[RMDB]
Conditions: 150 mM KOAc, 10 mM MgCl2 and 150 mM bicine (pH 8.5), 24 C. This 177-nucleotide RNA was probed chemically with DMS and 2A3. Reactivities are given for positions 27 through 126. The 2A3 profile rests on 3,740 reads. It was measured as part of the RMDB library TTRDES. 2A3 adducts were read by reverse transcription with SuperScript II with manganese. The DMS profile rests on 2,017 reads.
RNA sequence: GGGAACGACUCGAGUAGAGUCGAAAAGAUAUGGAUCCUAGCCUCGAUAAGUCGCCAUCGGAAACGAUGGUCCGACUUUUGACGAGGACUAGGAUCCUAAGUCAAAACCCAGUCUUCGGACUGGGAAGGAUACUCCCUUGUUCGCAAGGGAGUAUCCAAAAGAAACAACAACAACAAC
Reactivity to DMS in 0.01 (KOAc 150mM, MgCl2 10mM, bicine 150mM(pH8.5), 24C), signal-to-noise 2, nucleotides 027 to 126: g020a040u000a300u000g010g000a000u000c000c010u000a010g010c020c010u020c020g020a210u000a020a010g010u030c000g000c020c000a000u010c000g000g020a140a090a150c000g020a000u000g000g000u010c110c130g000a010c010u010u000u000u020g030a220c100g020a020g000g010a040c000u000a000g000g000a020u010c010c000u010a010a070g020u000c040a090a130a170a210c010c000c010a020g010u000c010u000u010c210g020g010a020c000u010g000g000g000a000a020
Reactivity to 2A3 in 0.01 (KOAc 150mM, MgCl2 10mM, bicine 150mM(pH8.5), 24C), signal-to-noise 2, nucleotides 027 to 126: g050a010u050a040u120g010g000a000u000c000c000u000a000g010c000c000u050c010g120a180u040a250a010g010u000c010g000c000c000a000u030c030g020g010a070a030a010c020g010a010u020g010g000u020c020c020g000a010c020u010u030u040u130g180a120c030g010a030g000g030a040c000u000a000g000g000a010u020c000c000u000a000a010g010u010c020a030a030a100a150c000c030c000a000g010u000c000u010u090c260g140g010a000c000u010g010g010g020a010a070